[RMDB]
Conditions: 150 mM KOAc, 10 mM MgCl2 and 150 mM bicine (pH 8.5), 24 C.
Structure probing data (2A3 and DMS) for a 207-nucleotide construct.
RNA sequence: GGGAACGACUCGAGUAGAGUCGAAAAAGAUAAUUGAUUCUGUAGAAAGAUCUAAUCUGAAGUUGAUUGAGAUAGAUAGAAAGGCAGCAGUACUCUUUCAUUUGAACUACCUAGAAGGGGAGAUUAAUUCAGAGCUAGACAUUCCAGGAGGUUGUCCGAAUAAUCAUGUAUUCGUACAUGAUUAUUCAAAAGAAACAACAACAACAAC
Reactivity to 2A3 in 0.01 (KOAc 150mM, MgCl2 10mM, bicine 150mM(pH8.5), 24C), signal-to-noise 2, nucleotides 027 to 156: a000g050a030u130a080a080u170u060g020a040u180u040c020u040g070u120a040g060a130a090a010g030a050u000c020u110a030a040u000c050u070g060a090a020g080u130u070g030a170u010u110g050a060g010a000u030a040g050a030u050a020g080a050a070a030g050g020c020a020g000c020a020g050u050a040c010u000c000u050u060u060c010a050u100u030u030g030a040a030c010u020a070c070c000u010a070g080a080a060g030g000g020g000a050g000a040u050u070a020a050u030u020c000a030g000a000g090c020u070a040g020a050c040a080u060u070c050c000a030g020g020a000g000g040u020u010g000u050c040c000
Reactivity to DMS in 0.01 (KOAc 150mM, MgCl2 10mM, bicine 150mM(pH8.5), 24C), signal-to-noise 1, nucleotides 027 to 156: a110g000a110u000a060a120u000u000g010a060u000u000c000u000g040u020a110g010a070a140a160g000a090u000c020u000a040a080u010c040u000g030a060a060g020u000u010g010a120u000u010g000a060g010a060u010a080g000a100u000a120g000a070a080a040g000g040c020a080g040c060a090g010u000a120c070u000c040u000u010u030c030a160u000u000u000g000a090a090c070u000a050c040c020u010a060g030a100a120g000g010g000g000a160g000a100u000u000a010a040u000u010c000a110g000a110g010c060u000a090g010a040c050a260u000u010c020c010a100g020g000a060g000g000u000u000g020u000c040c080

Source: RMDB library OK3TST, as collected in RNAgym. The DMS profile rests on 2,304 reads.